[RMDB]
RNA sequence: GGGAACGACUCGAGUAGAGUCGAAAAGACAAUAGCGUAGGGAACCAAGCAAAGAGGUAAGAAAUCCCACGGUAGAAGGCUUGGUUCUAGCCGUGGCAAGAAGAAGUCCCACUCCCUACGCCGAUAAUACAGCUUACACUUUCGAGUGUAAGCUGUAAAAAGAAACAACAACAACAAC
Reactivity to DMS in 0.01 (KOAc 150mM, MgCl2 10mM, bicine 150mM(pH8.5), 24C), signal-to-noise 2, nucleotides 027 to 126: g010a120c150a120a120u000a050g000c020g010u000a010g000g000g010a020a200c020c010a000a030g000c030a130a170a100g020a080g000g000u000a050a100g000a080a140a120u000c060c020c000a000c000g000g000u000a030g010a010a030g020g000c010u000u000g000g020u000u000c060u020a020g000c000c000g060u000g010g020c300a090a090g020a080a040g030a030a020g040u000c030c010c000a210c080u000c010c000c000u010a000c030g010c000c130g010a050u010a080a030
Reactivity to 2A3 in 0.01 (KOAc 150mM, MgCl2 10mM, bicine 150mM(pH8.5), 24C), signal-to-noise 2, nucleotides 027 to 126: g140a030c050a020a130u050a160g020c000g000u020a000g000g040g000a050a050c010c000a010a000g000c030a100a190a060g190a120g090g060u200a190a000g100a150a090a060u050c000c000c000a000c000g010g000u000a030g010a150a000g020g000c030u040u030g010g000u030u050c000u020a020g000c000c000g020u000g010g010c090a090a010g060a060a020g040a010a040g090u090c000c010c010a010c050u050c020c000c000u000a000c010g000c010c000g010a010u160a140a080